Chemical mapping of a 177-nucleotide RNA with 2A3 and DMS. It was measured as part of the RMDB library 15KREP. 2A3 adducts were read by reverse transcription with SuperScript II with manganese. For DMS, 2,632 sequencing reads were counted. DMS adducts were read by reverse transcription with MarathonRT.

[RMDB]
RNA sequence: GGGAACGACUCGAGUAGAGUCGAAAAGAGUGCUGGCCAUCCUUUUAAUAAGUUUGGCAAAGCUCGUGUCUAUUAUGAGAGCAUGUCUUACCAGGAGCAAGAUGAACUUUUUGCCAUGACAAAGCGUACCUAAUGAAGUGUUCGCACUUCAUUAGGUAAAAGAAACAACAACAACAAC
Reactivity to 2A3 in 0.01 (KOAc 150mM, MgCl2 10mM, bicine 150mM(pH8.5), 24C), signal-to-noise 4, nucleotides 027 to 126: g020a010g000u050g000c010u030g050g000c010c000a020u020c010c000u100u080u090u070a220a140u280a080a020g010u020u010u000g000g000c000a030a150a000g040c020u000c010g040u060g030u010c070u020a150u190u060a090u270g070a040g000a000g070c020a010u060g060u070c010u030u040a080c030c020a040g070g020a070g010c010a030a020g020a060u080g050a090a190c080u020u030u030u040u080g020c030c020a060u070g020a070c050a030a070a010g030c030g050u010
Reactivity to DMS in 0.01 (KOAc 150mM, MgCl2 10mM, bicine 150mM(pH8.5), 24C), signal-to-noise 3, nucleotides 027 to 126: g000a100g010u000g000c130u000g000g000c000c000a010u010c030c010u000u020u010u010a100a160u010a040a030g000u010u000u010g000g020c000a040a090a120g020c000u000c040g000u000g000u010c100u000a110u000u000a040u000g010a090g000a070g020c040a090u000g010u010c020u000u000a170c070c040a060g000g000a120g000c020a060a040g000a030u000g000a120a040c100u000u000u000u010u000g020c040c050a060u010g010a070c150a060a090a120g010c130g010u010